[RMDB]
RNA sequence: GGGAACGACUCGAGUAGAGUCGAAAAGCAGGAUAAUCAGCGCUAUGGUUGGGGUCUCAAGAGCCAGUAUGAACCGUGGAAGUAUGUGGGAUUGUAUGCCGAUGUGCGGGUUGAUUUUCGUAAAGGACCUAAUAGGCUCAUUCGUGAGCCUAUUAGGAAAAGAAACAACAACAACAAC
Reactivity to 2A3 in 0.01 (KOAc 150mM, MgCl2 10mM, bicine 150mM(pH8.5), 24C), signal-to-noise 2, nucleotides 027 to 126: g030c040a010g000g100a060u040a090a090u090c030a020g000c000g020c040u060a040u160g060g000u010u050g010g020g010g000u030c000u010c060a030a040g030a020g060c010c000a010g040u040a040u230g070a020a040c050c050g020u040g020g020a110a030g030u040a020u170g040u040g020g000g020a030u080u100g080u120a090u180g000c040c040g050a030u070g030u070g020c050g000g040g020u000u060g050a050u040u000u000u070c010g010u020a030a060a120g090g030a040
Reactivity to DMS in 0.01 (KOAc 150mM, MgCl2 10mM, bicine 150mM(pH8.5), 24C), signal-to-noise 4, nucleotides 027 to 126: g010c060a080g000g010a090u000a090a080u010c010a060g010c060g000c090u000a070u000g000g030u010u010g010g030g000g000u010c050u000c140a060a070g000a130g000c020c030a080g000u000a090u010g020a060a070c080c050g000u000g000g000a070a080g000u000a040u000g020u010g000g010g000a100u010u000g000u000a070u000g020c060c030g010a070u000g000u000g020c030g020g000g010u010u000g000a100u000u000u000u000c050g010u020a070a080a150g000g000a230
Chemical mapping of a 177-nucleotide RNA with 2A3 and DMS.
The data come from the RNA Mapping Database (RMDB), library OK2TST.
Reactivities are rounded to 0.1 and cut off at 0 and 3.
Conditions: 150 mM KOAc, 10 mM MgCl2 and 150 mM bicine (pH 8.5), 24 C.
The 2A3 profile rests on 1,929 reads.